[RMDB]
RNA sequence: GGGAACGACUCGAGUAGAGUCGAAAAAAAAGAUAUGGAAUCCACUACCCACCUGCGCAGCUCCUUGAAGACUGGUCGGAAACGACCAGUUGGAGAGCUGGCGCAGAGGUGGAUUCCUAAGUCAAAACUACAAUUAAAUCUUCGGAUUUAAUUGUAGAAAAGAAACAACAACAACAAC
Reactivity to DMS in 0.01 (KOAc 150mM, MgCl2 10mM, bicine 150mM(pH8.5), 24C), signal-to-noise 2, nucleotides 027 to 126: a050a100a170a140g020a060u020a020u010g010g000a040a000u000c000c000a060c020u000a090c050c030c120a300c040c010u000g020c000g040c020a050g000c010u040c010c300u010u010g020a160a110g010a020c000u000g000g030u000c000g020g000a010a050a050c010g010a010c010c000a000g010u010u000g000g000a020g000a010g000c000u000g000g010c000g000c000a010g030a050g020g020u010g000g010a000u000u000c000c000u000a000a030g000u000c050a100a080a080a210
The data come from the RNA Mapping Database (RMDB), library TTRDES.
This 177-nucleotide RNA was probed chemically with DMS.